[RMDB]
RNA sequence: GGGAACGACUCGAGUAGAGUCGAAAAGGAAAGCACAUGAAGCACGCGAAGCACGGCAAGCACAUGAAGCACUACAAGCAGUACAAGCAGCGCAUGCAGUAGAAGCAGCCGAAGCAGUACAAAAAAACACCUAUUACCAGUUCGCUGGUAAUAGGUGAAAAGAAACAACAACAACAAC
Reactivity to DMS in 0.01 (KOAc 150mM, MgCl2 10mM, bicine 150mM(pH8.5), 24C), signal-to-noise 3, nucleotides 027 to 126: g000g000a050a060a100g000c040a060c040a050u020g020a110a080g000c020a050c110g010c080g000a070a090g000c060a060c090g000g010c060a060a070g020c010a050c070a070u000g010a090a090g010c000a050c070u010a040c130a060a070g000c040a040g010u000a040c100a060a110g020c060a060g010c070g010c030a050u010g010c000a040g000u010a040g000a090a090g000c050a040g020c020c040g000a060a050g000c040a050g010u020a070c080a000a000a030a040a030a090a150
Reactivity to 2A3 in 0.01 (KOAc 150mM, MgCl2 10mM, bicine 150mM(pH8.5), 24C), signal-to-noise 3, nucleotides 027 to 126: g100g020a120a060a020g010c050a030c000a090u090g050a060a030g000c020a000c050g040c030g070a080a000g040c060a010c050g010g000c020a070a030g020c010a020c010a090u100g040a070a020g000c020a020c060u100a060c030a080a040g040c020a000g010u040a030c020a070a060g020c030a020g000c050g000c050a030u070g020c030a000g020u140a040g010a120a010g000c010a010g000c010c020g020a010a000g010c020a010g020u000a030c000a010a190a010a010a010a000a000
An RNA of 177 nucleotides, treated with DMS and 2A3 and read out base by base. Values are in units of 0.01, from 0 to 300, in steps of 10. DMS adducts were read by reverse transcription with MarathonRT. The RNA was probed in 150 mM KOAc, 10 mM MgCl2 and 150 mM bicine (pH 8.5) at 24 C.